Description: Chemical mapping of a 207-nucleotide RNA with 2A3. As a SHAPE reagent, 2A3 marks flexible, mostly unpaired nucleotides at the ribose 2'-OH.
[RMDB]
RNA sequence: GGGAACGACUCGAGUAGAGUCGAAAACAAAUUCAGUGGGAUAGGAGGACCAAUAAAAUAGUCUUGAUUAUUUUCAAAUGUGAUGCAAACAGUUGACCGGGAAGACAUUUUACCUUCAAAUUAUUAUUCUAUACGUCUCGCCUACUGUUCACAAAAACCAUAAUGCCCUGUUCGCAGGGCAUUAUGGAAAAGAAACAACAACAACAAC
Reactivity to 2A3 in 0.01 (KOAc 150mM, MgCl2 10mM, bicine 150mM(pH8.5), 24C), signal-to-noise 1, nucleotides 027 to 156: c030a000a150a000u050u130c000a040g010u030g030g000g030a030u060a190g030g040a010g020g010a010c060c060a060a040u030a130a070a080a000u060a000g000u000c000u000u070g100a070u140u210a150u100u230u130u080c090a090a000a060u120g010u010g040a100u070g080c120a050a160a030c030a040g020u060u000g030a000c030c060g000g030g010a030a000g000a040c010a030u000u030u030u060a000c000c000u040u080c060a000a070a150u090u070a070u030u050a030u060u210c090u040a100u030a150c000g100u030c010u000c040g000c000c000u000a030c000u040g020u010u070c070a000c020a060a030a100a000a000